[RMDB]
RNA sequence: GGGAACGACUCGAGUAGAGUCGAAAAACAAUCUGGUUCGCCAGAUUGUCAAUGUCUUCCAAAAAUCCUUGGAAGACUGUAUAUAUAGAAUAAAGGUCGAAAGUACCUGUGCUUUCGAGCACAGGAAUCGAUUUUACUGUUUCGACAGUAAAAUCGAAAAAGAAACAACAACAACAAC
Reactivity to DMS in 0.01 (KOAc 150mM, MgCl2 10mM, bicine 150mM(pH8.5), 24C), signal-to-noise 2, nucleotides 027 to 126: a030c000a000a000u000c020u040g010g000u000u010c240g000c010c000a020g020a030u000u000g010u000c090a080a130u010g000u000c010u000u010c000c000a000a010a010a010a200u010c010c000u000u000g010g010a020a000g020a010c010u000g010u000a070u020a110u000a170u000a160g010a150a160u010a110a160a020g000g020u000c160g000a070a030a120g010u010a090c000c020u000g010u000g010c000u000u000u020c120g000a010g020c000a010c000a000g010g000a060a090
Reactivity to 2A3 in 0.01 (KOAc 150mM, MgCl2 10mM, bicine 150mM(pH8.5), 24C), signal-to-noise 1, nucleotides 027 to 126: a000c000a000a030u000c010u000g000g060u050u070c150g030c070c000a000g000a000u000u020g000u000c030a000a040u080g000u000c000u000u020c000c000a000a010a000a000a020u000c020c000u000u020g000g000a010a010g000a000c000u000g000u000a100u000a020u000a010u020a080g060a180a080u240a300a190a010g040g010u020c040g030a110a090a020g030u050a060c000c010u000g020u010g010c000u040u090u130c270g010a000g000c010a000c010a000g000g000a010a020

An RNA of 177 nucleotides, treated with DMS and 2A3 and read out base by base. For 2A3 the reverse transcriptase was SuperScript II with manganese. The reactions ran in a buffer of 150 mM KOAc, 10 mM MgCl2 and 150 mM bicine (pH 8.5), at 24 C. The data come from the RNA Mapping Database (RMDB), library M2PK50. The DMS profile rests on 1,217 reads. Values cover nucleotides 27 to 126.